Description: An RNA of 207 nucleotides, treated with DMS and 2A3 and read out base by base. The data come from the RNA Mapping Database (RMDB), library M2RFPK. For 2A3, 2,789 sequencing reads were counted. 2A3 adducts were read by reverse transcription with SuperScript II with manganese. For DMS the reverse transcriptase was MarathonRT. Conditions: 150 mM KOAc, 10 mM MgCl2 and 150 mM bicine (pH 8.5), 24 C.

[RMDB]
RNA sequence: GGGAACGACUCGAGUAGAGUCGAAAAGCCUCCUCGCUUCCAUAGAAAGGGGACGGGGCAGAUCGCAAGUGCUACAACCGGGCGGUGGUAUCUGUCAAACUAAGCAGCCACUGCACAUCAAUUGACUAAACGAUGCCGAUCUUCGGAUCGGCAUCAACAAUUGUCAACAGUUCGCUGUUGACAAUUGAAAAGAAACAACAACAACAAC
Reactivity to DMS in 0.01 (KOAc 150mM, MgCl2 10mM, bicine 150mM(pH8.5), 24C), signal-to-noise 2, nucleotides 027 to 156: g020c000c010u000c000c000u010c000g010c000u000u000c050c040a070u000a160g000a100a150a180g010g030g010g030a040c030g020g000g010g010c100a020g050a050u000c030g020c020a100a120g010u000g040c020u030a120c050a120a170c100c110g000g010g040c020g020g020u000g010g020u000a060u010c050u000g020u000c040a090a080a200c130u000a090a140g020c030a150g020c010c010a040c000u000g000c020a070c060a060u000c100a090a100u000u000g000a200c060u010a050a110a130c090g020a010u010g040c010c030g040a010u000c000u000u010c300g030g010a000u000c000g010g010c010a000u000c000a010a120
Reactivity to 2A3 in 0.01 (KOAc 150mM, MgCl2 10mM, bicine 150mM(pH8.5), 24C), signal-to-noise 4, nucleotides 027 to 156: g030c010c000u010c000c000u010c020g050c070u120u050c020c000a120u080a220g210a080a140a060g020g010g000g010a010c010g000g000g020g000c020a010g020a060u020c010g010c040a040a020g020u000g010c030u100a150c060a110a090c080c040g140g070g010c010g000g000u000g010g000u020a040u040c000u020g070u070c070a070a060a100c110u090a090a010g020c010a000g030c000c010a010c000u010g070c010a030c020a080u250c070a020a180u120u200g110a120c030u160a040a090a070c120g000a000u000g000c000c000g000a000u000c000u030u070c170g060g000a000u000c010g000g000c010a000u000c000a000a000